Conditions: 150 mM KOAc, 10 mM MgCl2 and 150 mM bicine (pH 8.5), 24 C. Structure probing data (DMS and 2A3) for a 177-nucleotide construct. DMS adducts were read by reverse transcription with MarathonRT. The 2A3 profile rests on 3,779 reads.
[RMDB]
RNA sequence: GGGAACGACUCGAGUAGAGUCGAAAAGCAUCAUGGCUUAUUUAUGUAGUCUCGCUUUUGGACCAGAAAAAUCCCCAUUUUUUAUUAUCCUUGUGCUUGUAACACACUCCAGUUCAAUGCACACGAGCACCGAUUAAUAGUUCGCUAUUAAUCGGUGAAAAGAAACAACAACAACAAC
Reactivity to DMS in 0.01 (KOAc 150mM, MgCl2 10mM, bicine 150mM(pH8.5), 24C), signal-to-noise 4, nucleotides 027 to 126: g040c010a090u020c150a070u010g000g000c010u000u010a110u000u010u000a090u020g010u000a060g030u000c010u010c180g010c030u000u010u010u000g000g000a120c060c040a130g000a020a070a080a070a090u020c030c010c010c070a020u000u010u010u010u010u000a080u020u000a090u010c050c030u000u000g010u000g000c000u000u010g010u010a020a030c010a050c090a190c110u000c100c100a100g010u010u000c010a010a030u020g020c020a020c010a040c300g010a120g010
Reactivity to 2A3 in 0.01 (KOAc 150mM, MgCl2 10mM, bicine 150mM(pH8.5), 24C), signal-to-noise 3, nucleotides 027 to 126: g010c010a020u120c020a080u230g040g000c010u100u070a080u110u290u070a160u220g100u020a020g030u000c020u020c080g020c020u070u060u020u090g060g030a060c010c010a040g180a050a140a030a010a010u020c020c020c000c010a040u160u090u010u050u040u110a140u120u020a040u050c020c000u030u030g000u000g000c000u030u000g060u180a030a000c050a000c010a050c110u040c050c030a010g000u030u000c010a040a030u170g010c020a000c010a000c020g020a010g030